[RMDB]
RNA sequence: GGGAACGACUCGAGUAGAGUCGAAAAGGGUGAUGUCUCCUAACCUUUAUCAAUGGGGGCACUCGGUCGUGCUGUGGGUAGAAAUUUUAUUUCGUGCCUACCUUAGACGCUUGUCGUCGGGAGUAUGUAAGUUCCAGUGGUUCGCCACUGGAACUUAAAAAGAAACAACAACAACAAC
Reactivity to 2A3 in 0.01 (KOAc 150mM, MgCl2 10mM, bicine 150mM(pH8.5), 24C), signal-to-noise 2, nucleotides 027 to 126: g000g000g010u110g000a030u030g010u020c000u000c010c000u030a070a050c020c020u130u140u110a130u070c070a040a070u160g000g000g000g000g000c010a020c000u010c010g000g030u020c010g000u050g000c030u040g000u050g010g030g020u040a020g080a020a000a000u190u140u090u040a190u020u060u130c070g040u130g010c010c000u020a030c000c030u010u080a020g000a000c000g000c030u090u200g100u160c010g010u010c000g030g020g000a040g010u080a090u170g080
Reactivity to DMS in 0.01 (KOAc 150mM, MgCl2 10mM, bicine 150mM(pH8.5), 24C), signal-to-noise 2, nucleotides 027 to 126: g000g010g020u010g000a110u000g020u000c000u000c020c000u020a150a060c030c030u010u020u020a030u040c120a130a040u010g000g000g000g000g020c020a100c070u010c010g010g010u000c030g020u000g000c060u000g010u020g000g000g020u030a170g000a010a040a030u000u010u010u030a070u020u010u000c020g030u010g040c020c020u000a000c010c070u010u000a090g020a050c010g030c040u040u000g030u030c030g030u000c010g000g000g000a200g010u000a060u020g010